An RNA of 207 nucleotides, treated with 2A3 and DMS and read out base by base.
It was measured as part of the RMDB library ARCHII.
The reactions ran in a buffer of 150 mM KOAc, 10 mM MgCl2 and 150 mM bicine (pH 8.5), at 24 C.
For DMS the reverse transcriptase was MarathonRT.
DMS (dimethyl sulfate) methylates the pairing face of unpaired adenines and cytosines.
Reactivities are given for positions 27 through 156.

[RMDB]
RNA sequence: GGGAACGACUCGAGUAGAGUCGAAAACGCUUCUAGGGAAAAGUUUUCAAGAUUAAAUGAAGCAAACUAACUUCGAUUGUUGCGUUCUGCAUAGGAGUUAGGGAUUUUACAGAACGAUAAGCAUGUAGUGGUCAAUUCGUAAUUUGCCAAGGACGAGCCACUAACUAGUGUUCGCACUAGUUAGUGGAAAAGAAACAACAACAACAAC
Reactivity to 2A3 in 0.01 (KOAc 150mM, MgCl2 10mM, bicine 150mM(pH8.5), 24C), signal-to-noise 4, nucleotides 027 to 156: c040g000c000u030u010c040u110a070g000g060g000a080a110a070a090g120u160u100u100u180c080a100a040g010a130u140u170a060a060a100u110g020a000a010g000c000a010a020a010c010u000a000a000c000u000u020c020g120a220u300u120g000u020u100g040c010g000u030u020c010u040g000c000a000u080a070g010g000a000g010u000u000a010g000g000g000a010u040u060u010u140a040c020a000g010a070a000c000g030a040u060a100a030g040c030a030u080g020u080a030g030u020g060g000u030c020a030a040u020u040c020g030u080a030a160u060u070u110g060c040c030a030a030g020g000a000c020g010a030g030
Reactivity to DMS in 0.01 (KOAc 150mM, MgCl2 10mM, bicine 150mM(pH8.5), 24C), signal-to-noise 2, nucleotides 027 to 156: c100g020c050u000u000c020u000a210g000g000g000a090a110a160a250g020u000u000u020u000c020a170a160g010a130u010u000a060a060a120u010g020a030a060g000c020a070a120a210c040u000a020a020c020u010u010c020g020a210u010u010g000u000u000g000c000g000u000u010c030u000g080c030a100u000a150g030g010a090g020u000u000a020g010g000g020a300u030u000u000u010a150c020a070g030a040a050c050g000a100u000a020a070g010c040a040u000g030u000a080g010u000g030g020u000c050a060a060u010u000c060g000u020a000a170u000u010u030g030c040c040a070a140g010g020a080c000g010a250g020